[RMDB]
RNA sequence: GGGAACGACUCGAGUAGAGUCGAAAACUUUUCUCCUUUGUCACACCGCUCUGCAUCAAGGUGUCGAUGCAGCGACUCUGCACGUCAAUCCUCUAUAUGAUCGUGACGGCAGCGCGCAGGGAGCUGGCCCAGGUACUAUAUUCGUAUAGUACCUGGGAAAAGAAACAACAACAACAAC
Reactivity to DMS in 0.01 (KOAc 150mM, MgCl2 10mM, bicine 150mM(pH8.5), 24C), signal-to-noise 8, nucleotides 027 to 126: c080u010u030u010u010c020u000c010c040u020u030u010g010u000c070a100c090a140c040c040g010c050u010c020u010g020c020a030u010c040a120a130g020g010u020g020u010c110g010a020u000g010c040a070g020c040g000a090c040u000c010u010g010c000a110c020g030u010c010a040a150u010c050c110u020c140u020a090u030a090u040g010a020u020c160g010u010g010a010c030g000g000c040a030g000c160g010c030g010c020a110g020g000g000a090g010c070u020g010g010
Reactivity to 2A3 in 0.01 (KOAc 150mM, MgCl2 10mM, bicine 150mM(pH8.5), 24C), signal-to-noise 9, nucleotides 027 to 126: c020u120u060u080u030c040u070c020c010u100u150u170g060u090c010a030c010a020c070c020g020c020u030c020u070g010c020a040u030c060a110a150g210g020u120g090u130c080g020a020u020g020c010a020g010c000g130a130c010u010c010u040g010c040a110c210g010u010c010a020a090u050c050c040u050c070u090a170u060a080u300g070a060u080c140g100u100g030a020c010g010g000c010a020g000c010g000c000g000c020a030g040g030g010a010g010c060u110g090g000